[RMDB]
RNA sequence: GGGAACGACUCGAGUAGAGUCGAAAAGAAAGAAAGAAAAACCUGCAGAAUUCGAAGGCGAAAAUAAUCGAAACCUGAGGAAACAGGAAUAUUGGGAAUCUGCCAUCCUAAUAGCGCAGGAAAGAAACCUCACUAUGGUAUUCGUACCAUAGUGAGGAAAAGAAACAACAACAACAAC
Reactivity to 2A3 in 0.01 (KOAc 150mM, MgCl2 10mM, bicine 150mM(pH8.5), 24C), signal-to-noise 3, nucleotides 027 to 126: g130a020a150a000g050a050a080a010g050a050a110a000a020a030c000c000u000g000c000a040g120a090a080u030u010c010g010a070a050g010g000c060g040a060a040a020a190u220a030a050u020c010g040a040a060a070c000c000u020g020a050g030g270a150a120a040c000a000g000g020a010a050u030a030u020u010g000g000g050a010a040u020c070u210g020c000c000a000u000c010c000u000a010a000u020a010g020c010g000c000a000g000g000a000a040a010g000a020a040a000
Reactivity to DMS in 0.01 (KOAc 150mM, MgCl2 10mM, bicine 150mM(pH8.5), 24C), signal-to-noise 3, nucleotides 027 to 126: g020a080a090a060g010a050a090a100g010a090a200a080a160a080c010c000u000g050c010a090g030a130a170u000u000c000g010a130a050g010g000c030g020a130a050a070a030u050a030a030u010c000g000a030a100a180c010c000u000g000a110g000g040a080a060a120c010a020g000g000a060a040u020a010u000u000g010g000g000a060a000u020c190u040g020c000c010a130u010c000c010u000a010a000u000a070g000c160g000c000a000g000g020a050a040a070g000a080a100a060
The data come from the RNA Mapping Database (RMDB), library OK1LIB. An RNA of 177 nucleotides, treated with 2A3 and DMS and read out base by base. 2A3 adducts were read by reverse transcription with SuperScript II with manganese.